[RMDB]
RNA sequence: GGGAACGACUCGAGUAGAGUCGAAAAUAUUACCACAAAUGGCUCGUGGGCCAUUUUUAAUGACCACCAUCUUAAUAGACCUGGUGUCUAUUGUGGCUCUGAUUUUAUUGACAUUGUCAGGCGGUUACCCUUACGAUAGCUUCGGCUAUCGUAAGGGAAAAGAAACAACAACAACAAC
Reactivity to 2A3 in 0.01 (KOAc 150mM, MgCl2 10mM, bicine 150mM(pH8.5), 24C), signal-to-noise 1, nucleotides 027 to 126: u080a010u000u130a000c000c020a020c000a090a000a010u020g000g000c020u030c050g120u220g050g000g010c050c000a000u040u030u010u000u070a150a170u120g000a000c000c000a020c000c000a040u040c060u140u270a040a000u010a040g020a050c000c000u020g160g000u130g000u000c010u010a050u000u060g030u050g000g030c040u000c000u030g050a040u050u140u070u150a150u040u150g000a040c000a120u100u000g000u000c000a000g030g000c000g040g050u030u080a090